This 177-nucleotide RNA was probed chemically with DMS. It was measured as part of the RMDB library OK2TRN. For DMS the reverse transcriptase was MarathonRT. The RNA was probed in 150 mM KOAc, 10 mM MgCl2 and 150 mM bicine (pH 8.5) at 24 C. In probing experiments dimethyl sulfate is read out at A N1 and C N3, which are open when not base-paired. Reactivities are given for positions 27 through 126.
[RMDB]
RNA sequence: GGGAACGACUCGAGUAGAGUCGAAAACGGGUCUCUCUUUGAGUCCGAGUGCACAUGGCUGGUUAAUGCUUCCAACCCGGGCCACCGUCCCGGCGGUGGCCUCUGCCAUGCAUUCUACCAGCGGUUCAUACUCCAGUUCGUUCGCGAACUGGAGUAUAAAAGAAACAACAACAACAAC
Reactivity to DMS in 0.01 (KOAc 150mM, MgCl2 10mM, bicine 150mM(pH8.5), 24C), signal-to-noise 1, nucleotides 027 to 126: c020g010g020g010u020c000u000c020u020c300u000u010u000g020a030g000u010c030c010g010a150g020u010g020c070a040c190a080u010g020g000c000u000g010g000u000u000a000a010u010g000c020u000u000c090c040a080a220c100c050c130g020g050g030c000c010a010c000c010g020u020c010c160c240g000g010c020g000g010u000g000g000c000c010u000c020u000g000c060c060a040u000g000c010a010u000u010c250u000a030c010c000a020g020c000g020g010u010u020c090